[RMDB]
RNA sequence: GGGAACGACUCGAGUAGAGUCGAAAAUGACACCACCGGAAUCGAGCGAAUAAAUCACUCAUCAUCAGACAAUGGCUUUUUCAUAGUCGACAGUAAAACUGUUGCCAAAGUAUGGAGUGGAAGUAUACGUGAAUAGGUCAUUCGUGACCUAUUCACGAAAAGAAACAACAACAACAAC
Reactivity to DMS in 0.01 (KOAc 150mM, MgCl2 10mM, bicine 150mM(pH8.5), 24C), signal-to-noise 3, nucleotides 027 to 126: u000g000a130c080a100c060c050a080c060c040g000g000a060a080u000c080g010a070g020c090g040a070a060u000a070a130a100u000c020a010c020u000c020a060u000c030a090u000c100a140g010a030c050a030a120u000g000g020c120u000u000u000u000u000c090a060u010a070g010u000c050g010a030c080a020g010u000a030a010a030a300c030u010g000u000u000g010c020c020a050a040a120g000u000a050u000g000g000a040g030u010g020g010a060a040g010u000a040u000a090
Reactivity to 2A3 in 0.01 (KOAc 150mM, MgCl2 10mM, bicine 150mM(pH8.5), 24C), signal-to-noise 4, nucleotides 027 to 126: u110g020a000c030a000c030c010a020c000c010g050g070a040a060u060c070g030a020g060c030g000a080a020u130a130a120a050u060c010a010c020u010c000a090u030c000a020u050c010a080g040a100c030a040a080u050g020g020c030u100u080u080u130u140c120a120u120a120g070u100c050g030a010c020a010g020u070a000a080a080a160c010u010g020u050u030g000c010c000a070a050a020g060u080a070u080g040g020a030g010u010g000g020a050a030g080u110a070u040a190

This 177-nucleotide RNA was probed chemically with DMS and 2A3. The data come from the RNA Mapping Database (RMDB), library OK2TRN. The 2A3 profile rests on 3,176 reads. The reactions ran in a buffer of 150 mM KOAc, 10 mM MgCl2 and 150 mM bicine (pH 8.5), at 24 C. For DMS the reverse transcriptase was MarathonRT.